[RMDB]
RNA sequence: GGGAACGACUCGAGUAGAGUCGAAAAACUUUGGCCGACGCUGCUAGGCGGGUGGGCACUGCUGUCUGGCCCGGCGCCGCGCUAGGGCGCACGUUUCGCUCUGCGGAGGGUAACCGGGCUGAAAUAAGCUGUAAUGAAACUUCGGUUUCAUUACAGCAAAAGAAACAACAACAACAAC
Reactivity to DMS in 0.01 (KOAc 150mM, MgCl2 10mM, bicine 150mM(pH8.5), 24C), signal-to-noise 1, nucleotides 027 to 126: a140c080u000u000u000g010g000c020c020g020a070c050g020c020u000g030c120u020a050g000g040c050g000g010g020u010g010g000g000c040a070c040u000g000c080u010g000u010c040u010g010g030c010c010c020g000g030c220g010c010c000g020c020g020c040u010a000g010g010g000c010g000c130a080c230g000u000u010u000c000g010c020u000c010u000g020c000g010g020a140g010g000g000u000a100a150c010c000g000g000g010c020u000g020a020a070a100u040a090a100